[RMDB]
RNA sequence: GGGAACGACUCGAGUAGAGUCGAAAAGCCAUGCCGACCCGAAGAGGAAAGAAGGACGCGAGACGCGAACCUGUGAGUGGAAACCCGCUUUAUUCACUGGGGUCGACAACUCUGGGGAGAAAAGGGACUUUUAUAUGAACUUCGGUUCAUAUAAAAGAAAAGAAACAACAACAACAAC
Reactivity to DMS in 0.01 (KOAc 150mM, MgCl2 10mM, bicine 150mM(pH8.5), 24C), signal-to-noise 4, nucleotides 027 to 126: g010c050c060a080u010g020c040c000g010a070c030c000c030g020a110a060g020a100g020g010a040a100a080g000a150a050g010g010a260c050g010c050g010a120g000a140c100g020c000g010a080a090c020c010u000g020u000g000a060g010u000g010g010a080a090a120c100c010c020g010c080u010u000u010a070u010u000c050a050c040u000g000g000g010g010u000c050g000a070c090a040a070c040u000c030u000g000g020g000g000a140g010a030a060a020a050g000g000g000a220
Reactivity to 2A3 in 0.01 (KOAc 150mM, MgCl2 10mM, bicine 150mM(pH8.5), 24C), signal-to-noise 2, nucleotides 027 to 126: g000c010c010a020u080g010c020c010g040a030c000c020c030g060a080a030g060a060g070g090a080a050a090g080a030a020g020g030a020c020g040c010g050a180g040a100c100g030c010g040a110a180c000c020u060g030u070g060a030g000u030g000g010a050a130a120c000c000c000g020c030u030u160u030a160u030u050c030a020c050u070g000g000g000g040u020c000g040a020c020a060a110c000u050c030u060g050g010g050g000a030g030a010a080a010a030g020g010g020a020